[RMDB]
RNA sequence: GGGAACGACUCGAGUAGAGUCGAAAAUGCGGCGGACCGGGUGCGUCAUGGCGUGAAAAACCGCGUGGAAAUUCCCGAUUUUUCCGAGCGUCAGGACGAGGUGGGCCACCUUUCCACCUCCAUCCGAGACCUCCAUCACUUUCGAGUGAUGGAGGUCAAAAGAAACAACAACAACAAC
Reactivity to DMS in 0.01 (KOAc 150mM, MgCl2 10mM, bicine 150mM(pH8.5), 24C), signal-to-noise 1, nucleotides 027 to 126: u000g030c010g000g010c090g000g000a130c280c030g020g010g050u000g000c080g030u010c030a080u010g040g030c010g050u000g000a040a080a090a100a150c060c000g010c060g030u000g010g000a100a040a300u000u000c000c000c010g010a130u020u020u010u000u000c070c270g000a120g000c030g010u000c020a090g000g030a050c230g000a040g000g010u010g000g030g000c130c130a030c180c100u000u010u000c000c000a050c000c000u010c060c040a110u000c040c000g000a230
Structure probing data (DMS) for a 177-nucleotide construct. It was measured as part of the RMDB library OK2TRN.